[RMDB]
RNA sequence: GGGAACGACUCGAGUAGAGUCGAAAAGGAUCCGCCUAAACCGCUAUACUUGGUCCAUGGUCUUGGAGUGUCUUCUUACAUUGGUGGCAAUUGUUGUCUGGAUGACAUAUACCUCCAAAAUAGGCAACGCCUAGGCAUAAUUCGUUAUGCCUAGGCGAAAAGAAACAACAACAACAAC
Reactivity to DMS in 0.01 (KOAc 150mM, MgCl2 10mM, bicine 150mM(pH8.5), 24C), signal-to-noise 3, nucleotides 027 to 126: g000g020a090u000c030c140g020c020c010u010a060a180a090c080c040g020c130u000a090u010a120c170u020u020g010g030u000c020c010a090u000g010g010u000c090u000u000g000g020a120g020u000g020u000c060u000u000c050u000u000a080c160a100u000u000g000g000u010g000g040c070a030a120u000u000g010u000u000g000u000c050u010g010g000a080u000g000a010c050a040u000a140u000a070c060c000u040c010c000a020a020a120a080u000a030g000g010c110a100a140
Reactivity to 2A3 in 0.01 (KOAc 150mM, MgCl2 10mM, bicine 150mM(pH8.5), 24C), signal-to-noise 1, nucleotides 027 to 126: g000g020a100u030c020c000g050c050c000u070a090a010a000c030c010g000c120u080a060u070a300c120u090u100g040g000u040c030c040a100u080g020g010u020c030u080u060g070g050a100g000u090g010u010c060u060u030c000u000u070a040c020a180u080u160g000g010u060g010g080c050a040a140u130u070g050u110u010g000u000c050u000g170g040a060u130g010a040c010a000u140a030u050a110c020c000u090c040c000a010a020a060a130u100a010g060g000c020a030a030